[RMDB]
RNA sequence: GGGAACGACUCGAGUAGAGUCGAAAAUCAUGGAUCUACAUGCAUGACGCUAGCAGCUAGAGUACGAUAGCAUAUGGUACCUAGGAUCUCGUACCAUGAGACAUGCUAGCUAGGACAUGUAGACGGAGCUCCUAUCGUCUUUCGAGACGAUAGGAGCAAAAGAAACAACAACAACAAC
Reactivity to DMS in 0.01 (KOAc 150mM, MgCl2 10mM, bicine 150mM(pH8.5), 24C), signal-to-noise 2, nucleotides 027 to 126: u000c060a070u010g000g010a200u000c000u010a000c000a020u000g010c180a070u000g010a140c300g000c020u000a010g010c000a130g000c000u000a000g000a110g030u000a010c030g000a050u000a150g020c230a190u000a080u000g020g030u000a010c000c030u000a050g000g020a120u000c010u000c020g020u010a100c250c170a040u000g010a040g010a030c120a140u000g010c000u010a020g000c000u000a140g010g000a120c010a000u000g000u000a030g010a040c100g000g000a130
Reactivity to 2A3 in 0.01 (KOAc 150mM, MgCl2 10mM, bicine 150mM(pH8.5), 24C), signal-to-noise 3, nucleotides 027 to 126: u130c040a090u110g140g030a210u000c000u000a000c000a000u010g000c030a030u080g010a010c030g030c000u000a000g000c000a020g000c000u030a020g030a030g100u020a030c100g150a230u010a040g100c050a100u080a030u300g150g000u000a030c000c010u010a030g060g040a110u030c000u000c030g050u120a230c060c020a110u240g010a010g000a010c030a010u020g000c000u000a010g000c010u000a000g030g010a010c000a020u010g000u000a000g010a000c000g030g030a020